[RMDB]
RNA sequence: GGGAACGACUCGAGUAGAGUCGAAAAGUAUAGAAGCAUGAGACCGCAUGCGAUAUACGAUGAAUCGCGGUCGAAUCCGUUGUGCGAAAGCACUUCGGUAAUGCAUAUCGGUAGCCAGAUCCGCCCGGAUCAGCUACCGUAAUUAGUACGGGCAAGACCACUGAUAUAGGUUCGCCUAUAUCAGUGGAAAAGAAACAACAACAACAAC
Reactivity to 2A3 in 0.01 (KOAc 150mM, MgCl2 10mM, bicine 150mM(pH8.5), 24C), signal-to-noise 3, nucleotides 027 to 156: g080u040a040u080a280g120a140a030g000c000a000u010g010a000g000a030c000c030g030c050a030u160g090c030g000a020u060a040u040a170c140g050a050u140g150a060a090u070c080g000c000g010g010u000c000g000a000a000u020c000c000g000u000u020g000u000g000c010g040a060a000a020g010c000a000c000u000u000c000g000g000u020a020a010u010g000c010a010u050a070u210c000g000g010u010a020g000c020c080a040g000a010u000c010c000g030c000c000c010g000g010a000u000c000a000g010c010u010a000c000c010g000u020a010a010u040u090a040g080u030a030c010g000g010g010c010a030a010g050a090
Reactivity to DMS in 0.01 (KOAc 150mM, MgCl2 10mM, bicine 150mM(pH8.5), 24C), signal-to-noise 1, nucleotides 027 to 156: g020u000a150u010a070g000a140a240g020c010a050u000g000a280g020a020c000c010g000c050a170u010g020c000g010a190u010a060u000a090c150g000a280u010g010a140a090u000c070g040c010g020g000u000c000g000a050a140u000c010c030g000u000u000g000u020g030c000g030a120a090a210g010c000a000c000u000u000c000g000g010u000a010a000u000g000c050a170u000a050u010c030g020g020u000a010g040c000c010a200g000a010u000c010c040g060c120c050c030g060g000a080u000c000a050g000c000u000a000c010c010g000u000a010a050u000u000a180g020u000a080c070g050g030g050c080a120a130g010a200
An RNA of 207 nucleotides, treated with 2A3 and DMS and read out base by base. For DMS the reverse transcriptase was MarathonRT. The reactions ran in a buffer of 150 mM KOAc, 10 mM MgCl2 and 150 mM bicine (pH 8.5), at 24 C. The DMS profile rests on 1,994 reads.